[RMDB]
RNA sequence: GGGAACGACUCGAGUAGAGUCGAAAAUAAGUCUAGUUCGCUAGACUUACUAUCGGGAAAACAGCCUCCCGGCUCGAUCAGGCGGAUUCCGUCCAAGCGCUCCAACACACGUAUUCGUACGUGUGAACCGCGUAGAAAGAUUCGUCUUUCUACGCGGAAAAGAAACAACAACAACAAC
Reactivity to 2A3 in 0.01 (KOAc 150mM, MgCl2 10mM, bicine 150mM(pH8.5), 24C), signal-to-noise 2, nucleotides 027 to 126: u060a000a000g000u000c000u000a010g000u010u080c150g010c090u000a010g010a000c000u000u000a010c000u040a020u100c020g010g010g000a010a070a030a110c050a040g060c020c000u000c010c010c000g020g000c010u030c020g030a060u070c020a050g030g040c050g030g100a190u240u070c040c010g000u000c010c020a080a000g060c030g040c050u040c030c020a110a040c000a010c000a000c010g030u000a000u030u070c190g050u030a020c010g000u000g020u000g010a000a020
Reactivity to DMS in 0.01 (KOAc 150mM, MgCl2 10mM, bicine 150mM(pH8.5), 24C), signal-to-noise 2, nucleotides 027 to 126: u000a010a010g020u000c020u000a000g020u000u030c190g040c000u000a000g000a010c000u000u000a000c070u000a140u010c030g020g000g000a050a030a030a180c200a120g000c070c050u020c010c030c000g000g000c070u010c030g000a050u010c180a080g040g010c050g020g000a250u000u010c030c010g020u010c020c040a090a060g000c030g000c030u000c030c070a100a220c010a010c020a000c000g000u000a010u000u000c210g040u000a010c000g040u000g000u000g000a070a080